Record summary: An RNA of 207 nucleotides, treated with 2A3 and DMS and read out base by base. Values cover nucleotides 27 to 156. 2A3 adducts were read by reverse transcription with SuperScript II with manganese. For DMS, 2,121 sequencing reads were counted.

RNA sequence: GGGAACGACUCGAGUAGAGUCGAAAACAACACGUCCUCGUCGUACAGAGUGGUAACAUGUGUCACCAAAUAUCCAAGCUUGGGUACACGGGCUUGACCCAACCCCUUGGGCGGAUGGUGGCACAUGAAAAGAAGUAACACUUCGGUGUUACUUCAAGUAAUUGCAAACGUUCGCGUUUGCAAUUACAAAAGAAACAACAACAACAAC
Reactivity to 2A3 in 0.01 (KOAc 150mM, MgCl2 10mM, bicine 150mM(pH8.5), 24C), signal-to-noise 3, nucleotides 027 to 156: c040a010a010c030a010c070g130u070c010c010u070c040g130u030c020g030u140a070c050a090g060a030g060u110g060g090u180a090a030c010a000u000g000u010g000u020c000a000c010c000a000a030a200u300a030u050c000c000a000a000g030c030u050u020g000g000g010u010a020c010a000c060g010g010g020c020u250u300g160a300c010c000c000a000a020c000c000c000c000u000u000g000g000g000c010g000g000a010u000g010g000u000g000g000c000a000c000a000u000g000a000a000a000a020g000a000a000g000u010a000a000c000a010c000u030u070c290g040g000u000g000u000u000a000c000u000u010c000a000a000
Reactivity to DMS in 0.01 (KOAc 150mM, MgCl2 10mM, bicine 150mM(pH8.5), 24C), signal-to-noise 1, nucleotides 027 to 156: c080a100a120c090a090c020g000u000c020c030u010c040g000u000c070g050u000a090c090a120g020a120g020u010g030g020u010a070a120c020a020u000g030u010g010u010c000a020c000c010a010a020a260u000a000u000c010c010a060a190g000c070u000u000g010g000g060u000a070c200a110c030g000g030g020c000u000u030g010a150c020c000c020a140a050c010c030c020c020u010u010g030g000g000c060g000g000a300u010g000g000u010g020g100c020a030c010a000u000g010a020a020a090a110g010a010a000g020u000a010a020c010a010c000u000u010c270g060g020u010g000u000u000a030c000u000u000c000a020a110